[RMDB]
RNA sequence: GGGAACGACUCGAGUAGAGUCGAAAAACAUCGGUAGUUACGACUACCGAUGAAUAACCACUGUACAAAGCAGUGCUGAACGCACAGAAGUCAGCAGAGGUCAUAGUAGCCGAAAGGUGAAGGACAAAAAGAAUUAUCGAUUCGUCGAUAAUUCUUUAAAAGAAACAACAACAACAAC
Reactivity to 2A3 in 0.01 (KOAc 150mM, MgCl2 10mM, bicine 150mM(pH8.5), 24C), signal-to-noise 9, nucleotides 027 to 126: a000c000a000u000c000g000g000u010a010g000u020u070a090c240g020a020c130u000a000c000c000g000a000u000g000a000a000u070a010a010c010c010a030c020u030g010u070a090c110a090a110a040g020c030a040g040u010g010c010u040g050a130a030c050g030c080a060c020a180g130a160a010g040u020c010a000g000c020a020g050a050g120g020u000c000a010u030a100g000u010a000g000c000c010g050a070a040a010g000g010u030g020a020a020g080g000a010c000a020a140
Reactivity to DMS in 0.01 (KOAc 150mM, MgCl2 10mM, bicine 150mM(pH8.5), 24C), signal-to-noise 9, nucleotides 027 to 126: a140c010a000u000c010g010g000u010a000g010u000u010a120c180g030a070c000u000a000c000c000g000a000u000g000a050a030u010a100a140c030c000a200c040u000g010u010a080c190a110a100a130g000c060a050g010u000g000c010u000g010a090a110c090g010c090a070c190a120g010a120a100g010u010c040a030g010c050a100g010a140g010g000u000c010a040u020a050g010u000a210g000c000c010g000a080a070a120g000g010u000g000a140a120g000g000a020c030a050a090